Source: RMDB libraries RFM100 and RFMREP, as collected in RNAgym.
Structure probing data (2A3 and DMS) for a 177-nucleotide construct.
The RNA was probed in 150 mM KOAc, 10 mM MgCl2 and 150 mM bicine (pH 8.5) at 24 C.
RNA sequence: GGGAACGACUCGAGUAGAGUCGAAAAGUGUGCGGAUAGCUUGCUAUGCGUGUGUGGUUGUGUGUGGAUUGAUGUGGGUUUUAACUUGUUGCCGUUCGGGACGUUGACGAAAUGGAGCGAUUUGACCGCCCAUUAAAGAUUUCGAUCUUUAAUGGGCAAAAGAAACAACAACAACAAC
Reactivity to 2A3 in 0.01 (KOAc 150mM, MgCl2 10mM, bicine 150mM(pH8.5), 24C), signal-to-noise 4, nucleotides 027 to 126: g050u060g000u040g030c050g030g020a030u080a080g050c020u030u100g000c010u050a020u150g070c040g010u090g010u010g020u100g000g090u080u090g010u050g000u010g010u050g040g060a120u000u150g040a050u050g020u060g030g020g040u020u040u020u070a050a030c040u060u060g030u080u090g040c000c010g050u080u050c030g020g020g030a020c010g050u050u110g020a040c030g070a010a030a070u130g030g010a050g030c030g050a090u030u020u060g030a060c030c020
Reactivity to DMS in 0.01 (KOAc 150mM, MgCl2 10mM, bicine 150mM(pH8.5), 24C), signal-to-noise 4, nucleotides 027 to 126: g010u020g010u000g020c050g010g020a070u010a050g000c050u020u020g010c040u000a060u010g020c050g020u010g010u010g030u010g000g020u010u010g000u000g010u010g010u000g000g010a110u020u010g010a070u010g010u010g000g000g020u000u000u000u010a050a070c110u000u010g010u010u010g010c030c040g000u020u000c050g010g010g020a080c080g000u000u000g010a060c100g010a060a070a070u020g010g010a110g000c060g020a140u010u010u010g000a150c180c110